[RMDB]
RNA sequence: GGGAACGACUCGAGUAGAGUCGAAAAACUAGUAUGUACAGGGGUGGGUUGACCUGUCAUCUAGACUGCUGACCAUCAACUCACCGGUCAGCUGGAUGAUGUCCACAGAGUACGACAUCAGUACUCAGAGUAUGGAUGCGUUCGCGUAUCUAUACUCAAAAGAAACAACAACAACAAC
Reactivity to 2A3 in 0.01 (KOAc 150mM, MgCl2 10mM, bicine 150mM(pH8.5), 24C), signal-to-noise 9, nucleotides 027 to 126: a000c000u010a000g050u110a040u050g050u070a010c000a010g000g010g020g060u140g030g040g010u040u050g050a060c000c000u000g000u000c000a000u000c000u000a010g050a080c030u030g000c000u000g000a000c000c010a030u120c040a060a100c050u040c100a070c030c040g000g000u000c000a000g000c000u010g030g010a060u080g010a020u060g060u030c010c010a050c060a070g020a000g020u030a020c050g090a030c100a170u130c040a050g010u010a010c000u010c030a010
Reactivity to DMS in 0.01 (KOAc 150mM, MgCl2 10mM, bicine 150mM(pH8.5), 24C), signal-to-noise 9, nucleotides 027 to 126: a140c010u000a020g010u050a010u000g000u060a010c010a020g000g010g010g020u020g010g010g020u000u010g000a060c010c020u000g000u000c000a010u000c010u000a010g000a210c050u000g000c010u000g010a010c000c030a130u030c150a070a080c130u020c130a090c180c130g000g000u000c010a010g000c000u010g000g000a090u020g000a090u000g010u000c010c050a100c220a100g000a040g010u000a020c040g010a100c170a080u030c120a100g010u000a010c010u000c020a160
Structure probing data (2A3 and DMS) for a 177-nucleotide construct. It was measured as part of the RMDB library OK1LIB. Values cover nucleotides 27 to 126. As a SHAPE reagent, 2A3 marks flexible, mostly unpaired nucleotides at the ribose 2'-OH. In probing experiments dimethyl sulfate is read out at A N1 and C N3, which are open when not base-paired. The DMS profile rests on 62,163 reads. For 2A3, 88,755 sequencing reads were counted.